Annotation
This 177-nucleotide RNA was probed chemically with DMS and 2A3. Conditions: 150 mM KOAc, 10 mM MgCl2 and 150 mM bicine (pH 8.5), 24 C. For 2A3 the reverse transcriptase was SuperScript II with manganese. Values are in units of 0.01, from 0 to 300, in steps of 10. High 2A3 reactivity points to a flexible backbone, as in loops and unpaired stretches. It was measured as part of the RMDB library RFM100.

RNA sequence: GGGAACGACUCGAGUAGAGUCGAAAAGACCCUUUAUGGAACUGUCAUUCAACCCCAAAAAUCUAGUGCAAAUAUUGUCUUAAUUACUUAGGCUAAAAGAAAUAAGUAUUAAAGCGGGACAAGGCAUAAAACAACAUCGGUUCGCCGAUGUUGUUUUAAAAGAAACAACAACAACAAC
Reactivity to DMS in 0.01 (KOAc 150mM, MgCl2 10mM, bicine 150mM(pH8.5), 24C), signal-to-noise 1, nucleotides 027 to 126: g000a300c000c040c000u040u000u010a080u020g000g040a100a040c030u010g000u000c050a040u000u050c160a100a080c020c000c000c040a000a120a090a190a090u000c020u010a080g010u000g000c000a030a070a140u030a050u000u020g010u000c000u010u020a030a120u010u000a000c010u000u020a000g000g040c090u080a100a050a090a130g000a040a090a050u000a000a010g030u000a010u000u010a120a050a190g030c100g000g000g010a000c040a020a020g000g030c030a010u010
Reactivity to 2A3 in 0.01 (KOAc 150mM, MgCl2 10mM, bicine 150mM(pH8.5), 24C), signal-to-noise 1, nucleotides 027 to 126: g030a010c000c010c000u050u230u120a190u120g000g080a010a060c000u070g040u030c050a000u120u000c000a070a080c000c000c000c010a000a050a000a000a100u080c100u060a090g000u090g120c050a110a000a090u200a110u020u030g010u000c000u010u150a030a000u070u000a030c030u020u030a050g040g150c030u100a140a200a030a050g010a000a030a000u020a050a010g000u000a020u000u200a120a070a010g060c060g030g000g000a000c000a040a010g000g010c000a080u050